[RMDB]
RNA sequence: GGGAACGACUCGAGUAGAGUCGAAAAUGGUUUCGACGUGGGUUCGGGACCGGUGUGGUGCAUGUCGAGCUUGAGUGACGCUCGUAAAUCUCCAUUCAAAAAACUAACUGCAAACGACGAACGUUUCGCACUCGCCGCUUAAAUCCGGUGAGCCUUGCCCAAAGGUUGAGUUCGCUCAACCUUUGGGAAAAGAAACAACAACAACAAC
Reactivity to 2A3 in 0.01 (KOAc 150mM, MgCl2 10mM, bicine 150mM(pH8.5), 24C), signal-to-noise 2, nucleotides 027 to 156: u060g020g000u020u040u040c030g030a050c120g000u180g050g030g000u200u050c020g000g000g020a020c060c030g000g030u050g010u020g010g040u000g010c100a070u070g130u080c000g010a000g000c010u030u030g020a020g010u040g010a030c120g000c060u000c010g080u070a080a000a050u010c000u000c020c010a020u050u020c040a070a010a000a050a050a120c060u060a100a000c050u100g000c020a020a050a020c030g120a010c040g080a190a010c020g010u010u000u020c070g000c010a020c020u000c020g020c000c000g010c010u150u230a000a070a030u110c040c000g000g010u000g000a000g070c010c010u000u140g030